The record gives the reactivity of an RNA of 177 nucleotides to 2A3 and DMS. For DMS the reverse transcriptase was MarathonRT.

[RMDB]
RNA sequence: GGGAACGACUCGAGUAGAGUCGAAAAUAAUCUGACUGGCUAUGAGGUCAGACCACAUGCGCAUCUCAGGGCAUGUGAAUUAUGAGGUGCGGAGACCUGGGUUAAUUCACAAACUCAGAAUUGAGAAGAUAGUAGAGGAUUUCGAUUCUUUGCUAUCAAAAGAAACAACAACAACAAC
Reactivity to 2A3 in 0.01 (KOAc 150mM, MgCl2 10mM, bicine 150mM(pH8.5), 24C), signal-to-noise 9, nucleotides 027 to 126: u110a000a040u020c010u010g020a020c000u030g040g160c110u140a110u280g150a090g030g020u000c000a010g000a010c000c010a080c010a060u160g060c020g000c010a030u000c010u010c020a020g040g070g020c100a090u130g070u080g090a020a030u120u070a090u090g020a000g000g010u030g000c020g010g010a040g020a020c000c000u010g040g010g000u030u050a060a040u150u090c040a020c000a090a030a020c010u010c020a020g100a110a170u150u160g040a110g010a130a030
Reactivity to DMS in 0.01 (KOAc 150mM, MgCl2 10mM, bicine 150mM(pH8.5), 24C), signal-to-noise 8, nucleotides 027 to 126: u020a120a160u010c000u000g010a020c010u000g020g030c150u030a100u060g010a220g000g010u000c000a010g000a040c130c060a080c170a060u030g010c000g000c010a030u000c010u000c010a030g000g000g030c140a100u000g010u010g000a070a040u030u010a070u000g000a030g000g020u010g010c010g000g000a060g000a120c110c020u000g010g010g010u010u000a030a050u010u000c050a040c050a040a060a090c020u000c010a020g000a100a100u050u020g010a070g010a140a120